[RMDB]
RNA sequence: GGGAACGACUCGAGUAGAGUCGAAAAGGGACUGGCCCGAUGAAGCCCGGCAACCUAACUUUAUUUAAGCGUAAAGUGAAGGUGCUAAUUCCAGCAAAAUGGUGUAUUCCGUUUUGGUAGAUUAGAGAAGCGUGACAUGAGUUCGCUCAUGUCACAAGUCUUAGGUAGGGUUCGCCCUACCUAAGACAAAAGAAACAACAACAACAAC
Reactivity to DMS in 0.01 (KOAc 150mM, MgCl2 10mM, bicine 150mM(pH8.5), 24C), signal-to-noise 1, nucleotides 027 to 156: g010g060g000a250c090u010g010g040c000c000c000g020a140u020g010a180a120g020c000c000c030g000g000c030a070a080c010c030u010a120a020c010u010u000u000a000u000u000u010a130a130g040c270g030u000a000a000a000g050u000g000a170a030g020g000u000g020c010u000a030a050u010u000c010c010a100g020c050a030a020a000a040u000g010g050u000g100u030a160u000u000c000c010g090u000u000u000u000g060g000u000a040g000a090u000u010a050g010a180g000a040a130g020c110g040u000g030a030c000a000u000g000a040g030u000u000c300g000c000u010c000a010u000g000u010c000a000c000a020a080
Reactivity to 2A3 in 0.01 (KOAc 150mM, MgCl2 10mM, bicine 150mM(pH8.5), 24C), signal-to-noise 3, nucleotides 027 to 156: g010g000g020a050c050u050g040g010c050c000c010g020a010u120g090a090a060g020c010c000c040g000g000c060a100a120c000c000u000a010a020c000u030u010u000a050u050u120u120a170a040g120c050g070u010a000a000a000g000u040g070a130a040g000g000u000g000c000u010a000a000u090u060c010c000a000g010c050a070a010a030a000u050g010g030u090g010u180a140u160u020c010c010g000u000u000u000u010g050g010u060a060g010a280u060u050a060g050a060g020a140a070g150c080g080u000g000a000c000a000u000g000a000g040u010u090c170g070c060u000c000a000u000g000u000c000a000c000a000a000
Source information
The record gives the reactivity of an RNA of 207 nucleotides to DMS and 2A3. Reactivities are rounded to 0.1 and cut off at 0 and 3. DMS adducts were read by reverse transcription with MarathonRT. For 2A3 the reverse transcriptase was SuperScript II with manganese.